Source: RMDB library OK2TRN, as collected in RNAgym. Structure probing data (DMS) for a 177-nucleotide construct. The reactions ran in a buffer of 150 mM KOAc, 10 mM MgCl2 and 150 mM bicine (pH 8.5), at 24 C.

RNA sequence: GGGAACGACUCGAGUAGAGUCGAAAAAGUGCCAUCCGAAGUUUUAAACAAUUCCUUGUUUGAGAAUGGCAAGGUCCGAUUGGGUGAGUUGAGGAGAAAGCUGAACCACCUAGAUGAAAUUCAGCUGAUAGGCCUGAAGAUUCGUCUUCAGGCCUAUAAAAGAAACAACAACAACAAC
Reactivity to DMS in 0.01 (KOAc 150mM, MgCl2 10mM, bicine 150mM(pH8.5), 24C), signal-to-noise 1, nucleotides 027 to 126: a060g020u000g020c010c000a090u000c020c020g020a090a110g010u020u000u040u010a010a050a080c010a030a120u000u000c100c120u010u000g000u000u010u000g000a130g020a060a130u010g000g000c010a060a070g000g000u010c100c090g010a090u000u010g000g000g020u010g000a060g010u000u000g000a190g000g000a090g000a080a070a070g030c000u000g000a010a040c100c050a070c110c060u000a080g060a150u010g000a040a080a250u000u000c020a000g000c070u010g000